The record gives the reactivity of an RNA of 177 nucleotides to DMS and 2A3. Values are in units of 0.01, from 0 to 300, in steps of 10. Source: RMDB library VIROID, as collected in RNAgym. Conditions: 150 mM KOAc, 10 mM MgCl2 and 150 mM bicine (pH 8.5), 24 C.

[RMDB]
RNA sequence: GGGAACGACUCGAGUAGAGUCGAAAAUUAGCCAUCCGAGUGGACGUCUGUCCUCCUUCGGAUGCCCAGGUCGGACCGCGAGGAGGUGGAGAUGCCAUGCCGACCCGAAGAGGAAAGAAGGACGCGGGAUAUCUGUUAAGUUCGCUUAACAGAUAUCAAAAGAAACAACAACAACAAC
Reactivity to DMS in 0.01 (KOAc 150mM, MgCl2 10mM, bicine 150mM(pH8.5), 24C), signal-to-noise 5, nucleotides 027 to 126: u010u010a080g010c180c010a030u000c000c010g010a030g010u010g000g010a030c010g010u010c190u020g010u000c010c000u000c060c090u000u000c020g000g000a020u000g010c010c020c020a120g020g010u000c030g010g010a130c050c050g000c080g010a080g010g020a090g010g020u000g000g010a100g010a100u000g020c030c020a070u000g020c030c020g000a050c030c010c030g000a050a070g010a120g010g010a060a040a060g000a060a070g020g010a080c060g010c100g010g010
Reactivity to 2A3 in 0.01 (KOAc 150mM, MgCl2 10mM, bicine 150mM(pH8.5), 24C), signal-to-noise 4, nucleotides 027 to 126: u130u060a020g040c010c010a010u030c000c000g010a010g020u020g000g000a020c040g130u150c220u300g020u030c020c010u020c000c090u100u040c010g000g010a000u000g000c000c010c000a010g000g010u040c010g030g010a030c000c020g020c040g040a050g050g050a070g020g020u070g030g040a120g020a070u180g070c010c010a040u090g020c000c020g020a040c010c000c000g070a090a030g080a040g070g050a090a070a050g060a030a030g030g000a010c020g020c030g030g040